RNA sequence: GGGAACGACUCGAGUAGAGUCGAAAACGGAAACACAAUCACAGCGCACAGGCCGAGGUGAGAGUCCAAUGGCGUCGGGACUGAAUCGCGACCUCGGACUGGCAGAAGUCGUCGCGAUCAGUAUCGGAUUUUACCACCUCUUCGGAGGUGGUAAAAUAAAAGAAACAACAACAACAAC
Reactivity to 2A3 in 0.01 (KOAc 150mM, MgCl2 10mM, bicine 150mM(pH8.5), 24C), signal-to-noise 2, nucleotides 027 to 126: c050g040g050a080a060a000c060a020c060a120a060u080c020a050c030a130g060c040g020c020a050c000a110g050g000c030c020g040a010g040g030u050g000a080g010a010g040u000c000c010a100a070u100g090g010c030g040u000c010g000g020g000a000c000u010g060a090a060u050c020g000c040g090a020c010c010u040c040g030g000a030c020u030g000g000c040a010g030a100a010g030u070c060g010u000c000g010c010g030a010u040c000a020g050u040a040u060c020g050g010
Reactivity to DMS in 0.01 (KOAc 150mM, MgCl2 10mM, bicine 150mM(pH8.5), 24C), signal-to-noise 3, nucleotides 027 to 126: c100g010g010a050a060a070c110a050c080a110a100u000c040a070c070a110g020c080g020c050a120c060a100g000g000c030c020g010a080g000g020u000g020a090g000a130g000u000c020c050a050a120u000g010g010c080g050u000c020g000g000g020a010c010u010g000a070a080u000c020g010c030g010a030c000c040u000c060g010g010a040c000u010g020g010c080a100g000a100a130g000u010c080g000u010c020g020c000g000a030u000c020a020g020u000a050u010c020g020g000